[RMDB]
RNA sequence: GGGAACGACUCGAGUAGAGUCGAAAACACAUCCAAGGACGGCAGCAGGCGCGGAACUUGCCCAAUGCGCGGCGCGCGAGGCAGCGACGGGGAGCGCGCGAGCGAGGCGGGCCCACAGCCCCCGCCGCUCAAGGUUACUGUUCGCAGUAACCUUGAGAAAAGAAACAACAACAACAAC
Reactivity to 2A3 in 0.01 (KOAc 150mM, MgCl2 10mM, bicine 150mM(pH8.5), 24C), signal-to-noise 6, nucleotides 027 to 126: c070a000c000a040u020c020c010a020a010g080g030a020c020g020g050c020a030g000c020a030g060g000c020g000c020g030g020a040a050c040u070u140g020c000c010c010a020a060u120g010c010g010c020g060g040c010g000c010g000c020g020a060g160g020c050a040g030c030g090a080c050g030g000g000g050a060g020c020g000c010g000c020g010a040g000c020g010a010g010g010c010g000g010g000c010c010c010a120c030a030g010c000c010c000c000c020g020c000c010g000
Reactivity to DMS in 0.01 (KOAc 150mM, MgCl2 10mM, bicine 150mM(pH8.5), 24C), signal-to-noise 4, nucleotides 027 to 126: c100a110c180a060u010c030c010a070a120g010g000a090c050g000g000c020a050g010c080a070g000g030c040g000c080g000g000a100a080c130u030u020g010c020c000c070a110a170u060g000c030g000c020g010g010c020g000c000g010c020g010a180g020g010c040a090g000c050g020a070c020g020g000g020g000a170g010c000g000c040g010c070g010a090g010c010g010a150g010g000c140g000g000g030c040c100c050a040c140a110g000c040c020c020c010c020g000c010c030g000
Conditions: 150 mM KOAc, 10 mM MgCl2 and 150 mM bicine (pH 8.5), 24 C.
This 177-nucleotide RNA was probed chemically with 2A3 and DMS.